[RMDB]
RNA sequence: GGGAACGACUCGAGUAGAGUCGAAAAACAUGGCCGCAGCAUUGCGAGGGCCGCCGUGUUCAAGCGCGGGGAGUCAAUCGGACACGACCCGAAACCGGAUGAUCUAGACAUGGGCAAGACGAAGCGUGUCUGAUGAUCGAUUCGUCGAUCAUCAGACAAAAGAAACAACAACAACAAC
Reactivity to 2A3 in 0.01 (KOAc 150mM, MgCl2 10mM, bicine 150mM(pH8.5), 24C), signal-to-noise 3, nucleotides 027 to 126: a010c050a090u100g000g000c010c000g080c010a020g030c030a090u110u200g000c020g040a040g010g060g000c000c000g000c010c020g000u000g000u020u140c160a150a030g050c000g010c020g010g030g010g010a050g060u040c020a040a130u050c010g020g000a030c040a010c130g090a080c010c020c020g050a070a080a000c020c000g000g050a040u020g010a020u050c010u040a060g010a060c030a050u100g040g000g000c070a070a000g030a020c040g040a040a020g010c020g020u020
Reactivity to DMS in 0.01 (KOAc 150mM, MgCl2 10mM, bicine 150mM(pH8.5), 24C), signal-to-noise 2, nucleotides 027 to 126: a070c000a060u000g000g010c000c010g020c090a150g000c000a160u040u010g020c000g000a170g000g020g040c020c080g020c100c020g000u000g110u030u070c140a120a180g000c010g000c020g000g000g040g000a100g000u000c080a090a110u010c080g000g000a030c100a000c080g000a140c030c020c020g040a000a050a040c060c040g010g020a060u000g000a020u000c080u020a040g050a080c100a130u010g000g000g060c010a060a150g000a060c000g000a030a120g000c000g040u000

This 177-nucleotide RNA was probed chemically with 2A3 and DMS. The RNA was probed in 150 mM KOAc, 10 mM MgCl2 and 150 mM bicine (pH 8.5) at 24 C. The DMS profile rests on 2,085 reads.